[RMDB]
RNA sequence: GGGAACGACUCGAGUAGAGUCGAAAAGUAAAGGCGAGUGAGAAGAUCACAGAAUGCCAAAAGCACGCUUAGAAACGGACAUCUCUGAGCAAAAGUGCACGCAAUAAGCGAAAGAUGCCGUAAAAAACCGUAAAGAUUGUUUCGACAAUCUUUACGGAAAAGAAACAACAACAACAAC
Reactivity to DMS in 0.01 (KOAc 150mM, MgCl2 10mM, bicine 150mM(pH8.5), 24C), signal-to-noise 2, nucleotides 027 to 126: g010u000a070a080a110g000g030c010g010a130g010u000g000a040g000a120a150g010a150u000c020a020c020a090g000a090a070u010g010c000c010a020a050a080a140g020c020a060c020g000c040u000u000a070g000a050a080a030c050g000g010a090c030a020u000c020u020c070u000g020a180g000c090a020a040a050a160g000u000g020c090a120c070g000c030a100a060u010a080a110g000c020g000a140a120a070g000a070u020g010c000c000g000u020a000a040a030a050a040a040
Reactivity to 2A3 in 0.01 (KOAc 150mM, MgCl2 10mM, bicine 150mM(pH8.5), 24C), signal-to-noise 2, nucleotides 027 to 126: g050u070a050a040a040g030g000c010g030a040g010u060g020a020g010a190a070g040a060u020c010a010c020a030g140a100a060u170g000c000c000a010a030a020a050g000c010a020c030g000c010u030u010a030g070a070a110a000c050g030g050a010c010a030u000c020u000c020u030g010a000g030c000a000a050a050a200g040u050g000c040a000c080g000c010a020a300u100a270a010g000c010g000a000a050a040g020a010u030g000c050c000g010u030a050a090a010a000a020a040